[RMDB]
RNA sequence: GGGAACGACUCGAGUAGAGUCGAAAAGAUAUGGAUUAGUGAUGACCCACCACACAAUGAUGUCGGAAACGAUUGAGUGUCGGUGGCAAGCUAAUCCUAAGUCAAAACCGCCACUUCGGUGGCGGAACAUACGUUAACUGUUCGCAGUUAACGUAUGAAAAGAAACAACAACAACAAC
Reactivity to DMS in 0.01 (KOAc 150mM, MgCl2 10mM, bicine 150mM(pH8.5), 24C), signal-to-noise 9, nucleotides 027 to 126: g000a030u010a300u000g010g010a010u000u000a000g020u000g000a100u010g000a130c300c000c000a010c010c000a040c010a010c000a130a150u010g010a140u010g000u000c000g000g000a130a070a170c010g000a010u000u000g000a120g010u000g010u000c180g050g010u000g000g000c020a030a130g000c000u000a000a010u000c000c000u000a010a060g000u010c040a080a040a110a150c000c000g010c000c000a010c010u000u010c170g030g010u010g000g010c000g000g000a030a050
Reactivity to 2A3 in 0.01 (KOAc 150mM, MgCl2 10mM, bicine 150mM(pH8.5), 24C), signal-to-noise 9, nucleotides 027 to 126: g030a010u070a040u140g000g000a000u010u010a010g020u020g200a300u140g040a110c020c000c010a000c010c000a010c000a000c010a060a300u250g070a050u160g060u030c010g010g040a070a070a080c020g010a010u010u080g040a030g010u010g010u090c170g000g010u010g000g000c010a050a060g000c000u000a000a000u000c000c000u010a130a010g060u020c030a000a010a090a190c000c000g000c000c010a010c010u070u090c300g140g000u010g000g000c000g000g000a000a000